[RMDB]
RNA sequence: GGGAACGACUCGAGUAGAGUCGAAAAGGAGUUAAGUUCGCUUAACUCCCACUACCGAGAAUGCGACUCGGUAUAUCGCAAUAACCCUAGGAAACAAGGGAACCACUGACGACUUCGGUCGUCAGAAUCAACCUCUGGUGUUCGCACCAGAGGUUGAAAAAGAAACAACAACAACAAC
Reactivity to DMS in 0.01 (KOAc 150mM, MgCl2 10mM, bicine 150mM(pH8.5), 24C), signal-to-noise 1, nucleotides 027 to 126: g000g000a000g000u000u000a000a000g000u000u000c210g010c000u000u000a040a000c000u000c000c000c040a000c140u000a050c060c000g000a040g040a090a150u000g000c080g000a120c000u000c000g000g010u030a020u040a130u000c110g000c040a210a080u020a100a100c020c000c000u010a170g000g000a060a080a090c070a110a030g010g000g000a180a070c150c170a100c000u000g000a000c000g000a020c030u000u030c240g000g000u010c000g000u000c000a000g040a080a150
Reactivity to 2A3 in 0.01 (KOAc 150mM, MgCl2 10mM, bicine 150mM(pH8.5), 24C), signal-to-noise 2, nucleotides 027 to 126: g000g000a010g000u000u000a020a020g020u040u090c110g040c120u000u000a000a000c000u030c020c000c000a070c010u050a040c000c010g000a000g040a120a130u210g100c090g090a050c040u000c000g020g010u000a020u020a000u000c020g010c080a070a050u110a220a170c030c000c030u030a070g100g110a150a180a040c080a080a000g040g000g010a040a040c090c020a030c000u000g000a000c000g000a000c000u100u030c300g120g000u020c010g000u010c000a000g000a000a030
Record summary: The record gives the reactivity of an RNA of 177 nucleotides to DMS and 2A3. The RNA was probed in 150 mM KOAc, 10 mM MgCl2 and 150 mM bicine (pH 8.5) at 24 C.